[RMDB]
RNA sequence: GGGAACGACUCGAGUAGAGUCGAAAACGAGCCCUUCAUCUCGGUCAAGCUCGACGAUCCGAGCUUCAACGCCCCGAUCACCGCAGCGCUUUGGCCGAGCGAGAAAGAGGGGGAAUUCGCCCUCAUCCGAGCGUGGGUAUUUCGAUACCCACGCUCGAAAAGAAACAACAACAACAAC
Reactivity to 2A3 in 0.01 (KOAc 150mM, MgCl2 10mM, bicine 150mM(pH8.5), 24C), signal-to-noise 4, nucleotides 027 to 126: c050g010a020g090c000c000c000u040u050c050a140u010c000u020c000g000g030u010c000a020a000g000c000u000c010g070a060c060g010a040u000c030c020g000a010g010c000u180u090c050a070a050c120g020c000c010c020c070g000a020u010c030a030c020c090g080c110a070g060c080g030c150u130u060u080g020g000c000c010g000a000g000c040g030a120g090a010a160a020g020a030g040g000g000g020g080a030a100u110u040c020g070c000c000c010u050c050a140u090c040
Reactivity to DMS in 0.01 (KOAc 150mM, MgCl2 10mM, bicine 150mM(pH8.5), 24C), signal-to-noise 1, nucleotides 027 to 126: c050g000a000g000c000c000c000u040u000c000a140u040c030u000c000g000g000u000c050a000a130g050c000u020c030g000a170c230g000a000u040c000c300g000a070g000c000u000u070c180a060a210c290g000c000c000c080c300g030a000u000c000a300c110c050g010c250a060g070c060g000c280u000u040u030g020g020c000c000g000a000g000c220g010a060g030a030a110a020g000a050g000g000g000g000g030a000a180u090u000c040g000c000c040c050u000c120a150u030c000
Record summary: An RNA of 177 nucleotides, treated with 2A3 and DMS and read out base by base. As a SHAPE reagent, 2A3 marks flexible, mostly unpaired nucleotides at the ribose 2'-OH. The DMS profile rests on 1,161 reads.